Structure probing data (DMS and 2A3) for a 177-nucleotide construct. 2A3 adducts were read by reverse transcription with SuperScript II with manganese. Conditions: 150 mM KOAc, 10 mM MgCl2 and 150 mM bicine (pH 8.5), 24 C. For DMS, 1,545 sequencing reads were counted.
RNA sequence: GGGAACGACUCGAGUAGAGUCGAAAAGGAGUACUCUUCGGAGUACUCCAGCUACCGAGAAUCUUCCUCGGUAUAUAAAAGAAAGCCUUGGAAACAAGGGAAAUACGGCAGGGUUCGCCCUGCCGAACAUACAUCGGUGGUUCGCCACCGAUGUAUGAAAAGAAACAACAACAACAAC
Reactivity to DMS in 0.01 (KOAc 150mM, MgCl2 10mM, bicine 150mM(pH8.5), 24C), signal-to-noise 2, nucleotides 027 to 126: g000g010a020g010u000a010c000u000c000u000u020c270g030g000a000g000u000a010c000u010c000c000a020g000c140u000a000c010c000g010a020g000a150a160u020c130u020u010c130c000u020c000g000g010u010a000u000a030u000a030a060a030a050g010a100a140a080g010c010c000u000u010g010g000a150a130a220c040a000a010g020g010g000a040a050a090u010a080c020g010g010c020a020g000g000g030u000u020c250g000c000c000c000u000g010c010c010g000a000a030
Reactivity to 2A3 in 0.01 (KOAc 150mM, MgCl2 10mM, bicine 150mM(pH8.5), 24C), signal-to-noise 2, nucleotides 027 to 126: g000g020a010g020u050a000c010u000c000u080u110c300g020g040a010g030u020a000c000u000c000c000a000g010c010u020a000c000c010g010a000g010a030a120u080c080u100u050c080c000u000c020g000g000u010a110u020a000u030a160a030a010a000g110a050a050a020g110c000c020u010u000g020g000a050a050a010c000a000a000g000g000g030a000a100a030u130a020c010g000g000c000a010g040g000g000u070u080c150g150c010c000c000u000g000c000c000g000a000a000